RNA sequence: GGGAACGACUCGAGUAGAGUCGAAAACGCAUAGAACACAAAUGGUCUAAAUAAAGUAACUUGUCUUGCAACUACCUUUGUAUUGUUGCAUUUUUAGACACCCUGCACACUUCUUCCAUUAUGCUACUCAAUGCUUCUACUUCGGUAGAAGCAUUGAAAAAGAAACAACAACAACAAC
Reactivity to 2A3 in 0.01 (KOAc 150mM, MgCl2 10mM, bicine 150mM(pH8.5), 24C), signal-to-noise 3, nucleotides 027 to 126: c030g030c010a030u050a110g100a190a010c040a010c020a120a060a110u120g080g000u000c020u070a100a040a010u150a060a150a040g100u060a100a060c060u090u090g040u110c020u040u040g030c010a010a010c000u070a050c010c060u110u190u220g130u070a070u030u120g020u020u000g000c000a050u110u050u000u000u040a000g010a000c000a000c030c010c000u020g010c050a040c000a010c020u050u070c010u090u020c040c010a030u090u120a060u110g010c000u040a020c010
Reactivity to DMS in 0.01 (KOAc 150mM, MgCl2 10mM, bicine 150mM(pH8.5), 24C), signal-to-noise 3, nucleotides 027 to 126: c080g000c080a060u000a040g030a120a070c120a150c140a060a060a020u010g000g000u010c020u000a030a040a050u000a060a100a100g000u010a050a120c160u000u010g010u010c120u010u010g020c000a010a030c040u000a030c100c300u010u010u000g020u010a080u000u010g020u010u000g000c000a050u000u000u000u010u000a030g000a020c030a080c050c030c030u000g040c060a090c090a060c090u000u010c040u000u000c030c020a100u010u000a060u000g000c030u000a120c130
Background:
The record gives the reactivity of an RNA of 177 nucleotides to 2A3 and DMS. For 2A3 the reverse transcriptase was SuperScript II with manganese. The RNA was probed in 150 mM KOAc, 10 mM MgCl2 and 150 mM bicine (pH 8.5) at 24 C. The data come from the RNA Mapping Database (RMDB), library OK2TST.